Conditions: 150 mM KOAc, 10 mM MgCl2 and 150 mM bicine (pH 8.5), 24 C. This 177-nucleotide RNA was probed chemically with DMS and 2A3. The 2A3 profile rests on 4,850 reads. Values cover nucleotides 27 to 126. The DMS profile rests on 4,182 reads.
RNA sequence: GGGAACGACUCGAGUAGAGUCGAAAAUAACUCCAUCGAUCUCUAAUGAGAUCGAUGGAGGAUGAUGGAAAACGACAGGACCGUCAAAAAGUCGUUAAAGGAGUCGAGGAAAACUCGACUCCAAAAACCAGUGAUAAUUAUUCGUAAUUAUCACUGGAAAAGAAACAACAACAACAAC
Reactivity to DMS in 0.01 (KOAc 150mM, MgCl2 10mM, bicine 150mM(pH8.5), 24C), signal-to-noise 2, nucleotides 027 to 126: u040a090a140c000u000c000c020a010u000c020g010a000u000c000u000c000u040a130a150u010g000a030g010a000u010c000g010a010u000g000g010a000g020g010a000u050g010a090u000g000g010a120a070a020a060c040g000a010c040a070g000g010a200c040c010g000u070c110a080a100a090a160a100g020u010c030g000u000u000a030a060a120g000g000a000g070u010c000g000a010g000g020a130a020a090a140c010u000c000g000a000c000u000c010c010a010a000a080a100a040
Reactivity to 2A3 in 0.01 (KOAc 150mM, MgCl2 10mM, bicine 150mM(pH8.5), 24C), signal-to-noise 5, nucleotides 027 to 126: u090a020a010c000u000c000c000a000u000c000g020a000u000c020u020c040u280a300a120u300g000a000g000a000u000c000g000a000u000g010g010a000g000g000a020u080g020a000u020g040g090a070a110a020a000c010g020a010c020a030g220g100a040c040c020g140u160c100a060a110a010a000a010g030u020c030g000u020u070a070a050a070g000g000a010g000u000c000g000a010g000g090a070a120a060a080c010u000c000g000a000c000u000c000c000a000a000a000a000a000